[RMDB]
RNA sequence: GGGAACGACUCGAGUAGAGUCGAAAAGAAAGAGAGUUAGACACGGUUGAUCUCACCCUUCGGGGGGGUUAUAGAGAUCACUGGAAGCACUACCGGACAACCGGAACAUUGCAGCAAUGCAGCCCAAAAAAUCCAAACAUCUUCGGAUGUUUGGAAAGAUUAAAGAUCUCUUCGGAGAUCUUUAAUCAAAAGAAACAACAACAACAAC
Reactivity to 2A3 in 0.01 (KOAc 150mM, MgCl2 10mM, bicine 150mM(pH8.5), 24C), signal-to-noise 1, nucleotides 027 to 156: g050a020a130a010g130a010g030a030g040u090u100a120g020a090c010a020c100g000g060u090u130g000a000u010c000u000c000a000c020c020c070u080u170c240g180g000g000g000g010g000g010u090u050a160u130a150g020a000g030a000u010c010a000c030u000g000g030a050a000g040c010a030c020u070a030c000c030g060g020a090c080a100a210c040c010g000g030a040a000c030a050u060u040g000c000a030g010c000a020a020u040g000c010a030g030c000c010c000a000a180a040a040a000a000u020c000c000a000a000a000c000a000u000c000u040u010c030g110g000a010u000g000u000u000u020g010g000a000a010a000